[RMDB]
The record gives the reactivity of an RNA of 177 nucleotides to DMS and 2A3. DMS adducts were read by reverse transcription with MarathonRT. 2A3 adducts were read by reverse transcription with SuperScript II with manganese.
RNA sequence: GGGAACGACUCGAGUAGAGUCGAAAAUACACUAUACGUGUGCUGGUUUCAUUACUUUGUCCCAAACCAGGCACGCGUAAUUAAAGGCCAGUUUGGCCAGGUCCGCGUUAUCGAUGGUCACCAAUAAGAUUUAAAUGUGCUUCGGCACAUUUAAAUCAAAAGAAACAACAACAACAAC
Reactivity to DMS in 0.01 (KOAc 150mM, MgCl2 10mM, bicine 150mM(pH8.5), 24C), signal-to-noise 3, nucleotides 027 to 126: u020a100c130a100c120u000a100u010a000c020g020u010g010u000g010c010u000g000g000u000u010u000c150a070u010u020a100c170u010u000u000g010u000c010c000c020a070a010a020c000c000a030g020g010c030a010c020g010c000g010u010a010a030u000u010a070a100a100g000g010c010c000a110g010u010u010u010g010g000c010c000a040g000g010u000c040c040g020c080g010u000u000a080u000c070g000a060u000g020g010u000c060a070c050c080a080a110u010a070a120
Reactivity to 2A3 in 0.01 (KOAc 150mM, MgCl2 10mM, bicine 150mM(pH8.5), 24C), signal-to-noise 3, nucleotides 027 to 126: u100a000c020a000c060u120a020u020a180c000g000u000g000u010g060c000u000g010g000u030u000u030c050a080u110u170a140c110u070u130u260g090u090c040c000c000a000a010a000c020c010a070g160g040c010a000c010g000c000g010u010a000a000u060u130a100a050a020g030g020c000c030a060g120u180u250u150g050g000c020c010a020g000g000u000c010c030g000c020g020u060u050a120u150c030g030a080u090g030g040u080c030a000c040c050a020a100u150a150a020

Reactivities are rounded to 0.1 and cut off at 0 and 3.